[RMDB]
RNA sequence: GGGAACGACUCGAGUAGAGUCGAAAAGCAGAAGGUGGUCACGGUGACAGUUCUAACAAUGUUACAGGUGAAUAUGCGAACAAAACCGACUUCGAAGUGGAUAAGCGAAAACAAGAGGUCAAAAUCGGCAAUAGUUCCGAUUAUGCCAUCUAUUAUGUGGAUUUGUACCUUUCGAGGUACAAAUCCAAAAAGAAACAACAACAACAAC
Reactivity to 2A3 in 0.01 (KOAc 150mM, MgCl2 10mM, bicine 150mM(pH8.5), 24C), signal-to-noise 1, nucleotides 027 to 156: g000c020a050g000a130a050g040g030u030g040g030u020c020a020c190g000g000u030g000a030c050a100g000u060u040c070u100a000a060c060a060a200u070g060u050u050a000c010a030g050g070u010g160a080a040u110a070u190g030c020g000a160a000c060a080a010a000a010c000c000g100a110c000u070u090c060g030a120a040g080u050g070g060a020u050a130a000g080c080g000a030a050a030a030c090a250a000g000a000g000g060u190c070a120a120a000a000u010c030g000g020c030a060a100u050a080g000u070u090c000c000g000a020u040u030a130u170g000c030c000a010u000c080u070a120u210u000a030u230g090